The data come from the RNA Mapping Database (RMDB), library OK3TST. The record gives the reactivity of an RNA of 207 nucleotides to DMS and 2A3. The reactions ran in a buffer of 150 mM KOAc, 10 mM MgCl2 and 150 mM bicine (pH 8.5), at 24 C. Values cover nucleotides 27 to 156.
RNA sequence: GGGAACGACUCGAGUAGAGUCGAAAAAAAACGCCAAACCAGUAUGACUUGUGCUUUUUGAUAACAAAUCUGAUUUCAUAGGUCAAAAAGUGACACUAUUAAUGACAGCACAGACACAUUCAGAUGUUGAGAAGCUAUUGAAAUGACAUAAGGCUCAUCAUAGUAGCCGAUUCGUCGGCUACUAUGAAAAAGAAACAACAACAACAAC
Reactivity to DMS in 0.01 (KOAc 150mM, MgCl2 10mM, bicine 150mM(pH8.5), 24C), signal-to-noise 2, nucleotides 027 to 156: a060a070a020a090c080g040c070c040a080a060a060c070c010a140g040u000a110u020g000a050c020u000u010g020u010g010c010u000u010u000u000u010g010a050u000a040a090c080a050a050a030u000c060u000g000a070u010u020u010c060a070u010a050g020g000u020c000a020a040a040a100a100g010u020g040a060c070a090c040u010a090u000u000a030a080u000g000a070c030a090g040c040a060c040a090g000a080c050a060c070a070u030u000c050a060g000a040u000g010u010u000g000a090g030a080a110g030c020u000a030u000u020g000a050a020a010u010g010a080c020a060u010a050a060g020g010c010u000c010a160
Reactivity to 2A3 in 0.01 (KOAc 150mM, MgCl2 10mM, bicine 150mM(pH8.5), 24C), signal-to-noise 2, nucleotides 027 to 156: a000a000a000a010c100g010c050c030a100a040a010c090c030a100g070u110a180u120g060a100c050u050u070g020u010g040c000u030u080u050u050u060g090a080u050a170a030c040a130a130a080u040c010u020g080a090u000u080u030c020a030u090a020g000g040u000c020a060a060a030a060a120g130u130g050a030c070a010c150u060a070u110u050a040a040u060g030a040c020a020g000c020a020c010a030g060a010c060a000c000a070u150u150c000a020g080a140u020g060u090u050g030a120g020a070a010g000c020u010a040u070u080g060a050a110a110u150g040a060c010a070u090a060a010g010g030c060u070c050a050